Background:
Structure probing data (2A3 and DMS) for a 177-nucleotide construct. The RNA was probed in 150 mM KOAc, 10 mM MgCl2 and 150 mM bicine (pH 8.5) at 24 C. Values cover nucleotides 27 to 126. 2A3 adducts were read by reverse transcription with SuperScript II with manganese. DMS adducts were read by reverse transcription with MarathonRT. 2A3 is a SHAPE reagent: it acylates the 2'-hydroxyl of flexible nucleotides of all four kinds.
RNA sequence: GGGAACGACUCGAGUAGAGUCGAAAAGAUAUGGACUCGUCAAGGGAGCCUGGGAUCGGAAACGAUCCCAAGGCGAAGAACUUGGGAGCGAGUCCUAAGUCAAAAGGGCGCUGUUCGCAGCGCCCAACGAUGUAUGAUUGUUCGCAAUCAUACAUCGAAAAGAAACAACAACAACAAC
Reactivity to 2A3 in 0.01 (KOAc 150mM, MgCl2 10mM, bicine 150mM(pH8.5), 24C), signal-to-noise 3, nucleotides 027 to 126: g000a000u030a020u080g000g000a000c010u020c010g160u300c140a010a010g060g000g020a090g020c010c020u010g010g030g000a000u010c010g000g000a070a020a020c010g000a000u030c010c010c020a020a030g010g000c010g090a120a030g030a020a030c010u020u020g110g180g160a240g240c070g000a010g000u000c000c000u000a020a000g030u010c020a020a040a160a230g000g020g000c000g000c000u020g070u110u170c300g000c180a000g000c020g020c000c000c000a010a010
Reactivity to DMS in 0.01 (KOAc 150mM, MgCl2 10mM, bicine 150mM(pH8.5), 24C), signal-to-noise 3, nucleotides 027 to 126: g010a020u000a180u010g000g000a000c000u000c010g010u000c010a020a020g000g000g000a080g020c010c000u000g010g020g010a000u000c000g010g010a050a030a100c000g020a020u000c000c010c010a000a010g020g020c000g010a100a130g000a130a160c010u000u010g010g000g030a260g040c060g010a020g000u010c000c000u000a000a100g000u010c010a080a060a140a140g000g000g020c000g030c020u010g000u000u020c220g010c020a010g000c000g010c000c000c000a010a000